[RMDB]
RNA sequence: GGGAACGACUCGAGUAGAGUCGAAAAGCUGUUCAAAAAUUAUUUCAAGAAUGGAUGAACAAAAUGACCUGGGCUGUAAGCCUAAUCCUGCUUCUCAUUUGCUGUGUGACCCGGACAAAUGCCAACCCAUAUCUUUUCUGGAAUUCCAUGGUCCUCAAUCACGUUUUACGUUCGCGUAAAACGUGAUAAAAGAAACAACAACAACAAC
Reactivity to 2A3 in 0.01 (KOAc 150mM, MgCl2 10mM, bicine 150mM(pH8.5), 24C), signal-to-noise 2, nucleotides 027 to 156: g040c050u010g030u040u000c030a010a040a060a050a070u110u110a110u060u280u180c110a130a120g050a060a050u090g010g010a020u040g010a010a010c020a020a080a010a030u070g030a010c010c000u060g000g030g000c040u070g120u290a080a040g020c000c000u010a020a020u070c000c040u000g050c020u070u010c050u010c050a070u050u070u160g000c020u000g030u010g020u020g160a030c010c050c000g050g010a040c040a040a100a000u100g060c000c000a000a050c050c020c000a050u070a040u200c020u040u110u070u040c020u000g040g080a060a050u150u000c040c010a010u110g040g050u040c000c000u070c030a000

An RNA of 207 nucleotides, treated with 2A3 and read out base by base. Values are in units of 0.01, from 0 to 300, in steps of 10. Values cover nucleotides 27 to 156.